[RMDB]
RNA sequence: GGGAACGACUCGAGUAGAGUCGAAAAAGCCCGAGAGGGCCGUUCCCCCGAGGCGGAUGAUUCAGAAAGCAAUCGGAGAAGAGGAAAACAGAAAGAGAGUAAAGCCGGAGGAGAGCUGGGAGGACCGCAUGAACUUAUACUUCGGUAUAAGUUCAUGAAAAGAAACAACAACAACAAC
Reactivity to DMS in 0.01 (KOAc 150mM, MgCl2 10mM, bicine 150mM(pH8.5), 24C), signal-to-noise 1, nucleotides 027 to 126: a210g010c000c000c010g000a190g000a260g050g020g020c000c000g000u000u000c000c000c000c180c060g010a060g010g000c020g000g000a120u010g000a030u000u000c090a070g000a090a120a070g010c040a020a070u010c070g010g030a130g010a070a040g000a070g000g000a030a050a060a140c140a020g010a020a090a040g000a080g010a060g010u000a050a090a100g020c080c060g010g000a070g010g000a060g010a070g000c070u010g010g000g010a040g020g000a080c070c120g020